[RMDB]
RNA sequence: GGGAACGACUCGAGUAGAGUCGAAAAGGCGUAGCCGACAACAUGCCCAGGUAGCCCCGACCUUCAAGGCUACGGUGCGUUGCGACGCACGGUCUGAUUCUUCACAACGACGUUCACCGCGUCUUCUACAACCGGCAAAGAUUCGUCUUUGCCGGAACUUUUGUGAAGAGUUCGCUCUUCACAAAAGAAAAGAAACAACAACAACAAC
Reactivity to DMS in 0.01 (KOAc 150mM, MgCl2 10mM, bicine 150mM(pH8.5), 24C), signal-to-noise 2, nucleotides 027 to 156: g010g000c030g040u010a090g050c030c040g010a190c070a050a060c020a080u000g030c030c000c070a100g020g020u000a050g000c030c030c110c020g010a170c060c040u010u010c070a130a190g010g000c000u000a030c040g030g050u000g020c080g050u000u010g030c100g020a140c030g010c020a040c040g020g000u000c020u000g000a210u010u000c030u010u000c040a090c070a030a110c070g000a090c020g000u000u000c070a050c090c040g030c000g000u000c050u000u000c050u000a150c130a150a170c000c010g010g000c010a010a010a020g000a050u000u010c250g020u000c000u010u010u000g000c000c000g010g000a000a020
Reactivity to 2A3 in 0.01 (KOAc 150mM, MgCl2 10mM, bicine 150mM(pH8.5), 24C), signal-to-noise 4, nucleotides 027 to 156: g020g000c070g080u110a020g020c020c020g070a030c010a150a030c010a120u150g020c040c020c030a020g040g020u040a030g000c010c010c030c070g020a030c010c000u070u060c030a010a000g000g000c000u000a000c020g010g010u020g000c010g010u050u050g090c160g130a010c010g000c000a000c010g000g000u040c030u040g070a110u140u040c060u150u160c110a050c030a240a080c070g040a000c010g070u150u220c080a090c170c030g020c030g020u000c030u010u070c050u070a100c050a120a070c020c000g000g000c010a010a000a000g010a010u050u110c140g010u000c100u000u000u010g000c000c000g000g000a000a000

This 207-nucleotide RNA was probed chemically with DMS and 2A3. For 2A3, 2,507 sequencing reads were counted. High 2A3 reactivity points to a flexible backbone, as in loops and unpaired stretches. The RNA was probed in 150 mM KOAc, 10 mM MgCl2 and 150 mM bicine (pH 8.5) at 24 C. Values cover nucleotides 27 to 156. For 2A3 the reverse transcriptase was SuperScript II with manganese.